[RMDB]
RNA sequence: GGGAACGACUCGAGUAGAGUCGAAAAGCGUACUACUUCUCCUUUUGACGCGAUUCAUAGGGAGGUUCUCCCAAAUAGGAGAACCGAAGAACUAUUAUUUCGCGAUAAGGAGAAGUAUCGCAAAAUGUAUCGUAAUCCUUCGGGAUUACGAUACAAAGUUCGUAGAGUCUUUCGAGACUCUACGAACAAAAGAAACAACAACAACAAC
Reactivity to 2A3 in 0.01 (KOAc 150mM, MgCl2 10mM, bicine 150mM(pH8.5), 24C), signal-to-noise 2, nucleotides 027 to 156: g010c000g080u080a060c050u010a000c000u030u000c000u000c020c020u040u100u020u110g190a100c000g000c000g000a000u000u020c020a000u000a010g000g000g030a060g020g010u010u000c040u030c000c020c000a270a300a070u300a130g000g000a010g000a000a000c000c000g060a100a020g040a020a000c000u010a000u050u000a040u040u300u080c010g000c000g020a020u030a030a000g030g000a000g000a000a000g000u000a000u010c000g000c000a020a030a100a000u050g000u000a000u000c010g000u000a000a000u000c010c000u010u140c290g010g000g000a020u000u000a000c000g000a000u000a000c000a000a000a000